[RMDB]
RNA sequence: GGGAACGACUCGAGUAGAGUCGAAAAGGUCGAGGUACGUAACGCAGAGAGUUGGGAGCAUUACCGUGUUAGCCGUAUAGUUCCGCGACACCAGCUAUAGUAGUAGGUUAACUUCUGUGAAAGUCAAGGGUAAUUCAUUCUUCGGAAUGAAUUGCCCAAAAGAAACAACAACAACAAC
Reactivity to DMS in 0.01 (KOAc 150mM, MgCl2 10mM, bicine 150mM(pH8.5), 24C), signal-to-noise 8, nucleotides 027 to 126: g010g020u010c050g010a080g000g010u010a050c080g020u020a070a100c090g020c030a050g010a070g010a070g010u010u020g010g000g000a100g020c050a080u020u010a060c090c090g020u010g000u000u010a070g000c020c030g000u000a040u010a120g010u010u010c040c040g020c060g000a070c070a060c050c030a120g000c030u000a060u020a060g010u020a050g020u020a050g010g010u010u020a060a100c060u010u020c050u000g020u010g000a070a090a070g020u020c100a080a130
Reactivity to 2A3 in 0.01 (KOAc 150mM, MgCl2 10mM, bicine 150mM(pH8.5), 24C), signal-to-noise 9, nucleotides 027 to 126: g060g010u060c030g030a040g030g040u090a030c050g030u030a110a030c040g000c030a000g030a000g000a010g090u070u110g040g010g010a040g030c040a060u020u150a080c040c020g010u030g040u090u110a030g020c010c010g020u020a030u020a050g040u040u010c020c020g030c020g030a010c020a030c030c020a010g010c010u040a050u060a160g070u010a020g020u020a030g020g060u060u080a050a040c000u080u010c030u050g090u030g110a200a050a020g070u090c060a070a110